[RMDB]
RNA sequence: GGGAACGACUCGAGUAGAGUCGAAAAUGUAGCUCCUUUAGGCAUCACUCCUCUUGGGACACAGAUCAAAUCACCUGGCAUGAUCUGGGACAGCGACAUCUUGGGGACAGAGAUGGGCCAGGAAGGACUGCUACGUAAUUUUCGAAUUACGUAGCAGAAAAGAAACAACAACAACAAC
Reactivity to 2A3 in 0.01 (KOAc 150mM, MgCl2 10mM, bicine 150mM(pH8.5), 24C), signal-to-noise 4, nucleotides 027 to 126: u200g040u060a030g020c020u030c000c000u090u070u110a250g210g000c020a040u010c020a030c060u020c000c010u020c010u050u050g030g050g020a020c040a010c000a140g020a020u020c030a020a100a100u120c030a080c060c030u030g030g000c020a020u060g010a020u000c010u010g000g020g050a050c060a060g070c030g070a030c010a060u020c030u030u060g020g020g020g010a020c070a080g160a020g010a050u020g030g050g010c000c000a000g030g020a000a010g010g010a040
Reactivity to DMS in 0.01 (KOAc 150mM, MgCl2 10mM, bicine 150mM(pH8.5), 24C), signal-to-noise 5, nucleotides 027 to 126: u010g020u000a080g030c090u000c010c010u000u010u000a140g020g000c050a040u000c040a130c170u000c020c010u000c030u000u010g000g030g010a170c230a110c020a020g000a030u000c010a020a060a100u000c060a080c030c010u000g000g030c040a270u000g000a020u000c000u000g010g010g000a100c110a070g020c120g010a110c090a080u010c020u000u000g010g010g010g010a080c170a110g010a110g010a070u000g000g010g000c010c010a020g000g010a140a060g000g010a150
An RNA of 177 nucleotides, treated with 2A3 and DMS and read out base by base. For 2A3 the reverse transcriptase was SuperScript II with manganese. The DMS profile rests on 5,178 reads. For 2A3, 6,217 sequencing reads were counted.